[RMDB]
RNA sequence: GGGAACGACUCGAGUAGAGUCGAAAAAUGGAACGCAAGGCGCAGGAGCAGGGCUUUCGUCCAGAACUUGAGCGGUUAGAGUUAAACGAAGAGCGCCGGGGCGAAAACGCCCGUCGUAUUCUUCGUCACUAUCAGUAGGAUUCGUCCUACUGAUAGUAAAAGAAACAACAACAACAAC
Reactivity to 2A3 in 0.01 (KOAc 150mM, MgCl2 10mM, bicine 150mM(pH8.5), 24C), signal-to-noise 9, nucleotides 027 to 126: a000u090g010g010a100a020c030g010c090a040a050g080g000c050g000c070a030g030g060a050g030c040a060g030g040g010c000u040u040u050c030g020u000c020c010a030g030a060a030c030u080u100g020a020g050c040g050g050u060u100a050g020a030g100u080u220a070a090a010c000g000a010a000g000a000g000c000g000c020c030g010g010g030g020c060g070a150a110a030a050c050g030c000c000c000g000u000c000g000u010a240u080u010c000u000u000c000g020u010c020
Reactivity to DMS in 0.01 (KOAc 150mM, MgCl2 10mM, bicine 150mM(pH8.5), 24C), signal-to-noise 9, nucleotides 027 to 126: a080u020g000g010a070a070c070g010c100a090a070g010g010c040g020c040a050g000g010a070g010c050a080g000g000g010c050u000u010u010c050g000u010c030c040a080g010a100a080c070u010u000g000a090g010c110g000g000u000u000a050g010a300g000u010u010a050a090a030c000g000a020a010g020a030g000c000g000c040c010g000g010g000g010c020g000a110a070a120a180c180g010c010c000c000g000u000c000g000u010a110u040u010c000u000u000c000g010u010c190
Chemical mapping of a 177-nucleotide RNA with 2A3 and DMS. Values are in units of 0.01, from 0 to 300, in steps of 10. In probing experiments dimethyl sulfate is read out at A N1 and C N3, which are open when not base-paired. For DMS, 38,702 sequencing reads were counted. Reactivities are given for positions 27 through 126. 2A3 adducts were read by reverse transcription with SuperScript II with manganese. For DMS the reverse transcriptase was MarathonRT. For 2A3, 31,127 sequencing reads were counted.